This 207-nucleotide RNA was probed chemically with 2A3 and DMS. 2A3 adducts were read by reverse transcription with SuperScript II with manganese.

RNA sequence: GGGAACGACUCGAGUAGAGUCGAAAACACUGGAACCUCUCCGACGGCGUGAGCCGUGGCGACUUUGCGCUGUACAUCCACGAGACGAUCAGGCCGGACGUGUUCGACGUCGUGCAAGCGCUGAUCAUGGGCUACCGUCAACCGAAGGAGGCCACGCAUUAACGUAUCUCUUCGGAGAUACGUUAAUAAAAGAAACAACAACAACAAC
Reactivity to 2A3 in 0.01 (KOAc 150mM, MgCl2 10mM, bicine 150mM(pH8.5), 24C), signal-to-noise 7, nucleotides 027 to 156: c050a010c040u040g080g040a130a220c010c010u030c000u010c030c020g070a060c040g000g020c070g080u170g080a010g000c000c000g020u010g010g000c010g070a160c070u190u200u180g020c000g000c010u020g020u040a020c010a070u050c070c020a050c090g080a100g030a070c050g030a080u080c040a090g090g070c040c030g090g060a090c060g070u110g070u140u140c060g090a040c040g030u060c020g010u020g020c040a140a100g000c020g000c050u020g050a100u030c020a030u130g140g010g000c020u080a150c010c000g030u020c030a060a100c060c020g060a070a020g030g010a000g010g000c010c020a080c050g060c020
Reactivity to DMS in 0.01 (KOAc 150mM, MgCl2 10mM, bicine 150mM(pH8.5), 24C), signal-to-noise 3, nucleotides 027 to 156: c060a100c040u010g000g010a090a100c030c030u010c020u000c010c010g010a090c020g000g000c020g030u000g020a120g020c000c010g030u010g020g040c080g030a070c060u000u000u010g030c020g010c010u000g040u000a070c030a130u010c020c030a090c050g000a210g010a070c050g000a080u010c050a130g050g010c030c040g020g020a100c030g020u000g030u000u000c030g030a060c030g050u000c020g020u000g050c080a130a090g010c020g020c010u010g010a070u000c020a080u010g020g010g010c010u000a060c030c040g010u010c030a110a080c030c010g000a120a140g010g000a070g060g000c000c000a050c040g000c090
Background:
Conditions: 150 mM KOAc, 10 mM MgCl2 and 150 mM bicine (pH 8.5), 24 C.